[RMDB]
RNA sequence: GGGAACGACUCGAGUAGAGUCGAAAAAGUCGAAACUGACGAGCUUUUUGCGCCAACGCCAUUGUCGCAGGAGGCGGUCUUGGACGGUGUGGCGGAGCCUGAACUCAUGACGGACCUCAGAGACAGCGUGUGAUUGAGUCUUCGGACUCAAUCACACAAAAGAAACAACAACAACAAC
Reactivity to DMS in 0.01 (KOAc 150mM, MgCl2 10mM, bicine 150mM(pH8.5), 24C), signal-to-noise 2, nucleotides 027 to 126: a080g000u010c030g000a070a110a190c150u000g000a050c080g010a140g030c000u000u040u000u000u000g010c060g000c030c020a050a070c130g000c120c180a150u010u010g010u000c040g020c030a060g020g000a060g010g000c010g000g020u000c030u000u000g010g000a080c030g040g000u030g030u000g020g000c120g020g010a120g030c030c060u010g000a080a060c070u000c070a060u000g000a090c100g020g000a070c030c010u000c030a090g000a080g000a080c100a080g030c140
Reactivity to 2A3 in 0.01 (KOAc 150mM, MgCl2 10mM, bicine 150mM(pH8.5), 24C), signal-to-noise 1, nucleotides 027 to 126: a000g070u040c040g050a090a110a070c120u120g000a050c060g020a040g040c010u080u010u000u070u110g050c060g010c000c010a040a030c100g030c030c040a110u050u070g070u010c010g000c060a020g020g030a000g050g020c060g060g000u020c010u060u070g110g010a040c000g080g070u130g000u030g120g010c000g030g000a000g060c000c000u030g000a090a010c070u040c080a070u040g050a010c090g020g030a010c010c050u020c020a050g020a030g010a030c000a010g040c010
This 177-nucleotide RNA was probed chemically with DMS and 2A3. The RNA was probed in 150 mM KOAc, 10 mM MgCl2 and 150 mM bicine (pH 8.5) at 24 C.